[RMDB]
RNA sequence: GGGAACGACUCGAGUAGAGUCGAAAAAACGAGGCCGUGCGCAUACCUGAUACCGCUGUGGGAUAGGCCUUGAUCAGCUGGCAGUCGACACCGGCGUCAGCAGCGUCUGUGUUGCCGAAUCCUGCGAGCAUACCACGUACUUCGGUACGUGGUAUGCAAAAGAAACAACAACAACAAC
Reactivity to 2A3 in 0.01 (KOAc 150mM, MgCl2 10mM, bicine 150mM(pH8.5), 24C), signal-to-noise 1, nucleotides 027 to 126: a000a000c110g040a020g000g000c000c010g030u060g000c040g010c020a020u100a180c000c000u060g070a060u090a120c010c020g080c070u080g030u090g050g040g040a040u040a040g020g000c000c000u000u010g020a010u050c000a040g000c000u040g000g000c020a070g070u050c010g050a110c030a080c210c020g000g000c020g000u070c010a020g000c020a010g050c050g010u000c010u040g120u030g160u200u200g030c020c000g020a020a130u030c000c000u030g020c010g020a000
Reactivity to DMS in 0.01 (KOAc 150mM, MgCl2 10mM, bicine 150mM(pH8.5), 24C), signal-to-noise 1, nucleotides 027 to 126: a040a120c040g000a070g030g050c000c060g030u020g020c000g000c050a100u000a000c150c040u000g020a070u000a020c190c030g000c020u000g010u000g000g000g000a030u020a240g000g060c000c080u060u000g050a100u000c160a200g010c020u030g000g000c000a140g110u000c050g000a220c200a180c300c030g010g000c000g000u030c060a050g060c030a020g000c010g000u000c000u060g000u000g070u050u000g040c000c060g020a100a120u000c000c000u040g040c080g010a110